[RMDB]
RNA sequence: GGGAACGACUCGAGUAGAGUCGAAAAGGGCCACUUCCAGGGCGAGUUCCUCGCGUGCCCGUUCCAGACCCUCUUCCAGGGUGGAGGCUUCCAUGAUGAAGCGAUAGGCGCGGGAGAGCCUGGUCUCCGUCCAUUAUGAAUUCGUUCAUAAUGGACGAAAAGAAACAACAACAACAAC
Reactivity to DMS in 0.01 (KOAc 150mM, MgCl2 10mM, bicine 150mM(pH8.5), 24C), signal-to-noise 9, nucleotides 027 to 126: g010g000g020c030c050a090c070u000u000c030c040a120g000g010g010c020g010a090g010u000u010c120c030u000c030g000c050g020u000g010c000c010c030g000u000u000c010c010a170g010a110c020c000c010u000c150u010u010c190c160a080g010g010g030u000g010g010a130g010g010c010u010u000c000c080a170u010g010a160u010g000a030a010g010c010g010a090u010a060g010g020c020g020c070g010g010g010a030g010a290g000c040c010u000g000g010u000c030u000c050
Reactivity to 2A3 in 0.01 (KOAc 150mM, MgCl2 10mM, bicine 150mM(pH8.5), 24C), signal-to-noise 6, nucleotides 027 to 126: g030g010g010c060c040a160c080u100u020c040c020a040g010g080g050c040g020a030g060u180u110c030c010u010c030g100c000g040u030g010c010c010c010g010u080u010c020c000a050g120a120c010c020c000u040c060u230u060c090c090a020g030g030g000u030g020g060a070g090g000c000u020u000c030c010a260u280g040a190u180g010a120a000g000c010g010a050u100a150g040g000c020g000c020g030g040g000a020g000a000g010c000c010u020g030g010u010c020u020c010